[RMDB]
RNA sequence: GGGAACGACUCGAGUAGAGUCGAAAAGCUUAAUAACCUGCGCUGAGCCCUUCUCCCCAAGCUUGCCUGUGUCCUAGGGAAUUGGAAGGUCAUCCUUCACAGGAUCGUGUGGAAGUCCUGCUCGGGGUCCAAACAUGGUAAUUCGUUACCAUGUUAAACAAAUCGAGAUCUUCGGAUCUCGAUUUGUAAAAGAAACAACAACAACAAC
Reactivity to 2A3 in 0.01 (KOAc 150mM, MgCl2 10mM, bicine 150mM(pH8.5), 24C), signal-to-noise 1, nucleotides 027 to 156: g020c010u070u160a070a000u140a280a220c000c000u110g020c090g040c150u130g000a070g020c010c020c000u030u030c030u070c070c000c000c050a040a000g020c070u040u110g020c010c010u100g030u020g020u070c030c030u040a060g020g090g010a090a090u130u070g080g010a060a090g000g040u190c010a120u170c020c000u010u020c020a000c000a000g040g000a060u070c120g050u000g000u060g120g000a070a040g040u030c010c020u020g000c000u010c010g000g000g000g000u050c040c050a000a080a000c000a000u010g000g000u000a020a020u000u190c180g070u010u000a000c000c000a010u000g000u000u030a000a070

The record gives the reactivity of an RNA of 207 nucleotides to 2A3.
Source: RMDB library M2RFPK, as collected in RNAgym.
The RNA was probed in 150 mM KOAc, 10 mM MgCl2 and 150 mM bicine (pH 8.5) at 24 C.